[RMDB]
An RNA of 177 nucleotides, treated with DMS and read out base by base. In probing experiments dimethyl sulfate is read out at A N1 and C N3, which are open when not base-paired. The reactions ran in a buffer of 150 mM KOAc, 10 mM MgCl2 and 150 mM bicine (pH 8.5), at 24 C. Reactivities are rounded to 0.1 and cut off at 0 and 3. It was measured as part of the RMDB library TTRINS.

RNA sequence: GGGAACGACUCGAGUAGAGUCGAAAAGAUAUGGAACAUGUCACGCUAUAUGGUGGAGCUUGGACCGUACGGGAUCGGAAACGAUCUUACGCUAGCUCCUCAUAUAGCGUGACAUGUUCCUAAGUCAUCAAGAUACCGAGUUCGCUCGGUAUCUUGAAAAAGAAACAACAACAACAAC
Reactivity to DMS in 0.01 (KOAc 150mM, MgCl2 10mM, bicine 150mM(pH8.5), 24C), signal-to-noise 2, nucleotides 027 to 126: g010a050u000a300u030g000g020a020a000c000a010u000g000u000c010a050c000g000c000u000a010u000a010u010g000g000u010g020g000a030g040c010u000u010g050g010a070c300c040g030u000a080c300g000g010g010a010u000c000g000g000a140a120a290c000g010a010u000c000u000u000a020c020g010c030u000a010g010c000u010c000c010u000c010a010u000a000u010a010g010c000g010u000g020a000c000a000u000g010u000u000c000c000u010a020a060g000u000c050a260
DMS adducts were read by reverse transcription with MarathonRT.